[RMDB]
Background
An RNA of 177 nucleotides, treated with DMS and 2A3 and read out base by base. The DMS profile rests on 1,124 reads. DMS adducts were read by reverse transcription with MarathonRT. Reactivities are rounded to 0.1 and cut off at 0 and 3. Values cover nucleotides 27 to 126. The data come from the RNA Mapping Database (RMDB), library RFM100. The RNA was probed in 150 mM KOAc, 10 mM MgCl2 and 150 mM bicine (pH 8.5) at 24 C. For 2A3, 530 sequencing reads were counted.
RNA sequence: GGGAACGACUCGAGUAGAGUCGAAAAAAGGAAGCUGACGAGCGGGAGGCCUUCACGGGCUGCACCGCUGGCCGACCCUGAUCUUCUGUGAAGGGUUCGAGUUGGAGCACGCCUGUCGGGACCCGAACAACGCCGACAAAUUCGUUUGUCGGCGUUGAAAAGAAACAACAACAACAAC
Reactivity to DMS in 0.01 (KOAc 150mM, MgCl2 10mM, bicine 150mM(pH8.5), 24C), signal-to-noise 1, nucleotides 027 to 126: a020a140g000g000a000a030g060c000u000g000a160c040g000a030g060c000g050g000g000a300g000g000c000c050u010u000c300a050c170g000g000g000c000u000g000c030a300c000c000g010c060u000g000g000c120c070g000a100c040c000c000u040g000a150u000c000u000u060c280u030g000u000g000a300a000g000g000g010u000u060c000g000a150g000u000u020g030g020a000g010c100a070c180g020c000c010u050g020u210c010g000g000g000a230c000c000c030g000a050a160
Reactivity to 2A3 in 0.01 (KOAc 150mM, MgCl2 10mM, bicine 150mM(pH8.5), 24C), signal-to-noise 1, nucleotides 027 to 126: a010a010g090g020a040a030g020c040u070g150a160c050g050a000g000c000g020g000g010a010g010g060c020c000u080u120c110a010c080g000g000g000c000u000g070c000a010c000c000g000c000u010g020g000c010c010g000a000c010c010c000u000g040a030u000c050u300u020c130u300g040u030g020a010a000g010g010g000u040u020c020g000a020g010u140u270g090g050a010g020c000a000c120g050c000c000u000g000u030c040g000g000g110a070c010c010c010g010a000a000